[RMDB]
RNA sequence: GGGAACGACUCGAGUAGAGUCGAAAAGAUAUGGAUCGUUACUGGCUUUUGACGGAUAUGUGUCGGAAACGACACUAAGUCCGAUAAGCCAGGACGAUCCUAAGUCAAAACGUCUGUUCGCAGACGACAAAUUAUUCGGCUUCGGCCGAAUAAUUUGAAAAGAAACAACAACAACAAC
Reactivity to DMS in 0.01 (KOAc 150mM, MgCl2 10mM, bicine 150mM(pH8.5), 24C), signal-to-noise 2, nucleotides 027 to 126: g000a100u010a300u010g000g030a000u000c010g020u010u000a180c020u000g000g020c000u030u000u020u010g000a300c090g000g000a010u010a300u020g000u010g000u030c000g000g000a130a110a220c010g010a010c010a010c000u000a040a240g010u010c000c010g020a110u000a020a010g010c010c000a000g040g010a000c000g000a000u000c000c000u000a000a110g030u000c040a050a010a120a240c020g010u000c000u000g010u000u010c140g040c020a010g000a050c000g010a300
Reactivity to 2A3 in 0.01 (KOAc 150mM, MgCl2 10mM, bicine 150mM(pH8.5), 24C), signal-to-noise 2, nucleotides 027 to 126: g010a020u100a040u180g020g000a000u000c000g040u090u060a300c030u010g000g080c040u200u130u110u180g300a180c080g020g010a000u030a020u210g010u040g000u010c040g020g050a060a080a100c010g000a000c020a020c000u020a100a000g000u000c000c010g030a000u030a050a000g010c040c000a000g000g000a010c010g000a000u000c000c000u000a030a000g040u000c020a010a040a080a120c010g000u000c000u040g050u070u140c290g100c170a010g000a040c030g010a020
Structure probing data (DMS and 2A3) for a 177-nucleotide construct. DMS adducts were read by reverse transcription with MarathonRT. The reactions ran in a buffer of 150 mM KOAc, 10 mM MgCl2 and 150 mM bicine (pH 8.5), at 24 C. As a SHAPE reagent, 2A3 marks flexible, mostly unpaired nucleotides at the ribose 2'-OH. 2A3 adducts were read by reverse transcription with SuperScript II with manganese.